[RMDB]
The record gives the reactivity of an RNA of 177 nucleotides to DMS and 2A3. Source: RMDB libraries RFM100 and RFMREP, as collected in RNAgym.
RNA sequence: GGGAACGACUCGAGUAGAGUCGAAAACAACGGGUAACCGAAUUGAGCCAGUCCAAGACUCGCAAGGUUGAGGGUUGUUGUGGGAAAGUCGCACGUUUGGGGUCGAACCCUUAACUGCUCGCAAGGCGAUAUCGCAUAAUUUCGAUUAUGCGAUAUCAAAAGAAACAACAACAACAAC
Reactivity to DMS in 0.01 (KOAc 150mM, MgCl2 10mM, bicine 150mM(pH8.5), 24C), signal-to-noise 5, nucleotides 027 to 126: c050a070a110c040g000g000g000u050a060a070c020c020g000a110a110u010u010g000a130g020c020c020a110g010u020c030c020a060a200g010a050c030u000c060g010c220a090a200g010g010u000u000g000a200g000g000g000u000u000g020u000u000g000u010g000g000g000a080a050a070g020u010c090g010c030a030c150g000u010u000u000g000g010g000g010u000c160g000a050a300c020c000c000u000u000a030a040c040u010g020c010u000c090g010c180a040a140g000g010c210
Reactivity to 2A3 in 0.01 (KOAc 150mM, MgCl2 10mM, bicine 150mM(pH8.5), 24C), signal-to-noise 4, nucleotides 027 to 126: c050a060a000c020g010g000g040u110a100a020c030c000g040a070a050u040u130g000a030g040c020c020a010g010u020c030c020a080a060g010a070c010u010c030g040c070a040a110g050g000u050u070g020a070g040g040g010u020u010g010u060u040g030u040g000g020g070a080a090a070g050u060c040g000c020a020c060g000u010u030u080g000g000g000g000u060c070g040a150a140c000c000c000u010u010a010a040c020u020g030c010u000c050g080c050a030a050g070g040c050